[RMDB]
Annotation:
An RNA of 207 nucleotides, treated with 2A3 and read out base by base. Reactivities are rounded to 0.1 and cut off at 0 and 3. The RNA was probed in 150 mM KOAc, 10 mM MgCl2 and 150 mM bicine (pH 8.5) at 24 C. For 2A3, 2,381 sequencing reads were counted. It was measured as part of the RMDB library M2RFPK.
RNA sequence: GGGAACGACUCGAGUAGAGUCGAAAAAGCGAUGAUACGUCAUCGCAACGAUUGCCUGAUCGUAAAACAGGAGACGGCCGUGGCCGCGCCCACGUAAAAAAGCGUAACGUGGUCUACGGACCACGAAAAAAGCGCGGAACGUUCGCGUUCCGCGCAACGAUCAGUCAUUGUUCGCAAUGACUGAUCGAAAAGAAACAACAACAACAAC
Reactivity to 2A3 in 0.01 (KOAc 150mM, MgCl2 10mM, bicine 150mM(pH8.5), 24C), signal-to-noise 2, nucleotides 027 to 156: a000g010c010g000a000u000g000a000u030a090c220g080u020c010a000u000c000g000c000a010a020c000g010a010u000u050g010c000c000u010g020a040u000c040g100u150a000a040a040a040c020a020g050g000a040g060a020c130g070g010c080c010g000u000g000g010c030c020g000c030g130c000c010c010a010c030g030u070a000a000a000a030a040a000g010c000g020u010a060a020c010g000u000g010g000u000c010u030a080c220g060g000a000c000c000a000c000g020a040a010a000a000a000a000g020c000g000c010g010g000a000a010c000g010u060u090c160g020c020g100u000u000c000c020g000c020g040c000a000a000